Chemical mapping of a 177-nucleotide RNA with 2A3 and DMS. For 2A3 the reverse transcriptase was SuperScript II with manganese. For 2A3, 7,886 sequencing reads were counted. The DMS profile rests on 10,849 reads. The data come from the RNA Mapping Database (RMDB), library OK1LIB. The RNA was probed in 150 mM KOAc, 10 mM MgCl2 and 150 mM bicine (pH 8.5) at 24 C.

[RMDB]
RNA sequence: GGGAACGACUCGAGUAGAGUCGAAAAGAUCUCUAACAGCACCAUGAGAUCAGUAGGCGAGAAGCUGUCGCAUACUCUUCGGAGUAUGGUCUUCGGACCGACAGCGGUGCUGUAGAAGCCUACGAAAGGGACUGUGGGCCUUCGGGUUCACAGUCCCAAAAGAAACAACAACAACAAC
Reactivity to 2A3 in 0.01 (KOAc 150mM, MgCl2 10mM, bicine 150mM(pH8.5), 24C), signal-to-noise 6, nucleotides 027 to 126: g060a050u010c010u010c010u060a100a020c010a010g010c000a020c020c000a100u180g110a040g000a130u060c030a010g010u010a010g010g000c030g040a050g030a190a030g020c000u010g010u010c000g000c080a000u010a010c000u000c010u030u090c260g090g000a000g000u000a000u010g050g000u000c000u040u050c180g100g010a000c010c020g000a000c000a000g020c020g010g000u020g020c000u000g000u020a020g020a090a010g010c000c000u020a010c010g060a080a050a080
Reactivity to DMS in 0.01 (KOAc 150mM, MgCl2 10mM, bicine 150mM(pH8.5), 24C), signal-to-noise 4, nucleotides 027 to 126: g020a040u000c000u000c010u010a050a130c020a020g000c020a050c020c030a190u010g010a030g000a060u000c040a040g020u000a010g000g000c030g000a120g020a100a060g040c040u000g000u000c020g030c110a030u000a010c000u000c000u000u080c170g020g000a000g000u000a000u000g010g000u010c000u000u060c160g030g000a050c140c120g000a030c010a010g000c010g000g020u010g010c020u010g020u010a040g010a080a100g010c000c000u000a010c010g020a040a100a090
Values cover nucleotides 27 to 126.